[RMDB]
RNA sequence: GGGAACGACUCGAGUAGAGUCGAAAAUGAAAGCUGUGUGAGCGAGGCGGGCGGAGGAUGAGGCCGUGCCCGGGCUCUGGCUGCAGCCGCCCGGGGACACGCCGUGCACCCUCGGGCACCGGAAAAAUGUUGCUAAGUAUUUCGAUACUUAGCAACAAAAAGAAACAACAACAACAAC
Reactivity to 2A3 in 0.01 (KOAc 150mM, MgCl2 10mM, bicine 150mM(pH8.5), 24C), signal-to-noise 2, nucleotides 027 to 126: u190g040a070a060a030g050c020u010g010u020g020u060g200a060g080c020g020a030g040g040c080g020g020g000c030g010g040a080g060g020a070u120g070a060g080g020c060c010g000u030g020c010c000c010g000g030g000c040u070c110u080g060g000c060u230g050c040a040g000c010c020g000c000c000c000g020g000g000g000a010c000a010c030g020c010c000g000u010g010c020a050c000c010c000u010c000g000g100g000c010a040c040c000g030g000a070a100a010a000a040
Reactivity to DMS in 0.01 (KOAc 150mM, MgCl2 10mM, bicine 150mM(pH8.5), 24C), signal-to-noise 5, nucleotides 027 to 126: u020g010a110a120a110g010c020u000g010u010g010u000g010a060g020c030g010a060g000g010c090g010g000g020c010g000g000a060g010g010a110u010g010a110g000g010c050c070g020u000g000c000c000c000g000g010g010c020u010c140u000g030g010c040u010g010c210a100g010c040c090g010c010c000c010g000g000g000g010a070c010a030c090g000c020c020g000u000g000c070a080c090c010c010u000c020g000g010g020c020a060c020c020g000g010a020a040a050a100a100